[RMDB]
RNA sequence: GGGAACGACUCGAGUAGAGUCGAAAAUGGUAUGAUUAAGAAGCUCGACAACGAUGUUCUUAAUGGUAUCAUUUCUAACGCUAGGAAUGGUUGUAUACCUCUUAGUGUCAUCCCACUGUGUGCUUCAACGCAAGCCUGUUCGCAGGCUUGAAAAGAAACAACAACAACAAC
Reactivity to DMS in 0.01 (KOAc 150mM, MgCl2 10mM, bicine 150mM(pH8.5), 24C), signal-to-noise 5, nucleotides 027 to 129: u010g000g010u000a000u000g040a030u030u000a000a030g000a040a040g040c090u010c030g040a210c300a180a130c030g010a000u050g030u020u000c010u010u010a000a000u000g020g030u030a000u000c010a020u010u020u030c180u000a150a050c040g040c030u020a020g000g000a020a020u060g020g060u010u040g060u070a170u090a060c020c010u000c020u030u000a050g000u060g030u000c220a010u010c000c010c000a050c190u000g040u060g030u000g000c080u000u000c050a060a300c270g040
Reactivity to 2A3 in 0.01 (KOAc 150mM, MgCl2 10mM, bicine 150mM(pH8.5), 24C), signal-to-noise 6, nucleotides 027 to 129: u010g000g000u000a000u040g100a010u170u000a000a000g010a000a000g150c020u000c000g060a050c050a260a130c060g030a050u240g060u020u000c000u000u000a000a000u010g060g010u000a000u000c000a000u010u020u000c040u030a040a010c000g020c000u030a000g040g050a160a160u240g040g060u060u140g200u260a110u080a100c010c000u000c000u010u010a000g000u010g020u040c010a020u020c000c040c000a000c040u060g040u010g020u010g030c040u040u100c020a050a040c070g000